This 177-nucleotide RNA was probed chemically with DMS and 2A3.

RNA sequence: GGGAACGACUCGAGUAGAGUCGAAAAUUUGGUGAUUAAAAUGGGUUACCACGGGUGAAAUCUAUUGUAGAAGGGCAACCUUAUGCAGUAGUAAAGUAGUCCCUCUGGUCCAUUGUAAUGUCGACCACACUUAGAGGAAUUUCGAUUCCUCUAAGUGAAAAGAAACAACAACAACAAC
Reactivity to DMS in 0.01 (KOAc 150mM, MgCl2 10mM, bicine 150mM(pH8.5), 24C), signal-to-noise 9, nucleotides 027 to 126: u010u030u010g010g020u000g010a050u000u010a020a040a020a010u000g000g000g010u010u040a050c000c000a010c190g010g000g000u000g000a100a170a170u000c000u000a000u000u000g010u000a020g010a040a010g000g010g000c300a090a140c000c000u000u000a050u000g000c000a010g000u000a010g010u030a000a000a060g010u000a110g000u000c000c000c010u010c030u000g000g000u010c000c000a000u000u000g000u000a020a020u010g010u010c050g010a060c020c010a120
Reactivity to 2A3 in 0.01 (KOAc 150mM, MgCl2 10mM, bicine 150mM(pH8.5), 24C), signal-to-noise 9, nucleotides 027 to 126: u100u060u070g010g000u030g010a030u040u060a040a070a020a030u020g020g000g040u100u230a020c010c010a020c070g010g000g010u030g010a000a000a010u000c000u000a010u000u000g010u010a020g010a060a010g000g010g020c040a080a090c010c000u000u000a020u030g000c000a000g000u020a010g020u200a000a000a010g000u000a000g010u010c000c000c000u000c000u000g000g010u000c000c000a000u000u010g040u050a050a060u090g050u080c050g110a030c000c000a010